An RNA of 207 nucleotides, treated with DMS and 2A3 and read out base by base. The data come from the RNA Mapping Database (RMDB), library OK3TST. 2A3 adducts were read by reverse transcription with SuperScript II with manganese. For DMS the reverse transcriptase was MarathonRT. The RNA was probed in 150 mM KOAc, 10 mM MgCl2 and 150 mM bicine (pH 8.5) at 24 C.
RNA sequence: GGGAACGACUCGAGUAGAGUCGAAAAAGGAAGAAAUGGGUGACCCCAUGUUGUAAUAAACCUUGUGAUGAACAGAAAGAGAGUGGUGUGAGAAGAGAGUACAUCGGGGUAUGUGGGGUUACUUUAGCUCACACAGAUAAGAUUUAAGGUGAUAUAAUAAUAGUCCCAUGUUCGCAUGGGACUAUUAAAAAGAAACAACAACAACAAC
Reactivity to DMS in 0.01 (KOAc 150mM, MgCl2 10mM, bicine 150mM(pH8.5), 24C), signal-to-noise 1, nucleotides 027 to 156: a040g020g000a080a110g010a040a160a080u010g010g030g020u000g000a060c040c000c000c010a080u000g000u000u010g040u000a120a140u010a060a140a070c050c010u000u000g020u020g030a080u000g010a100a240c020a130g030a150a070a180g010a100g000a070g010u000g020g030u010g090u000g000a130g010a070a170g010a100g010a120g020u000a020c020a120u000c020g000g020g030g030u010a050u000g010u000g020g000g080g030u000u000a010c050u020u000u000a080g010c010u010c030a000c030a080c020a190g000a130u000a050a100g010a160u000u000u000a050a060g010g020u010g000a140u000a070u000a020a260
Reactivity to 2A3 in 0.01 (KOAc 150mM, MgCl2 10mM, bicine 150mM(pH8.5), 24C), signal-to-noise 2, nucleotides 027 to 156: a000g070g000a080a040g040a020a130a040u170g100g000g000u010g030a010c000c000c000c000a010u070g040u070u060g070u150a050a130u040a050a120a010c020c020u060u020g060u070g150a050u000g030a020a050c060a060g100a110a100a010g100a010g010a010g080u100g020g030u020g020u000g030a030g010a090a020g060a010g010a010g050u050a010c010a000u010c040g010g010g000g060u100a040u110g000u010g000g040g000g010u000u000a000c000u020u010u020a030g010c000u000c010a040c000a000c010a040g030a030u090a020a000g030a040u040u130u190a020a040g010g020u070g000a030u210a030u250a250a080